[RMDB]
RNA sequence: GGGAACGACUCGAGUAGAGUCGAAAAAAAUUAUGGUCGCCGGCACGUAUGUGCACACCGAGUAUGACACUCUUUCGCCGUCAACCGUGUCGGUAGUCUUGCACAUCAGGAAUCCGUCUGCGUUGAAUACCCACCACGUAUUCGUACGUGGUGGGUAAAAAGAAACAACAACAACAAC
Reactivity to DMS in 0.01 (KOAc 150mM, MgCl2 10mM, bicine 150mM(pH8.5), 24C), signal-to-noise 1, nucleotides 027 to 126: a020a050a040u010u000a070u000g010g000u000c020g030c000c010g050g000c010a050c030g010u000a010u000g000u060g000c020a110c190a040c150c040g010a010g000u010a120u010g020a110c180a040c010u010c030u010u020u000c110g020c010c030g000u000c110a040a090c140c030g020u010g000u000c070g040g030u000a040g010u000c030u070u000g020c090a020c070a010u000c090a050g000g000a070a040u000c040c010g010u000c060u000g010c110g010u000u050g000a130a120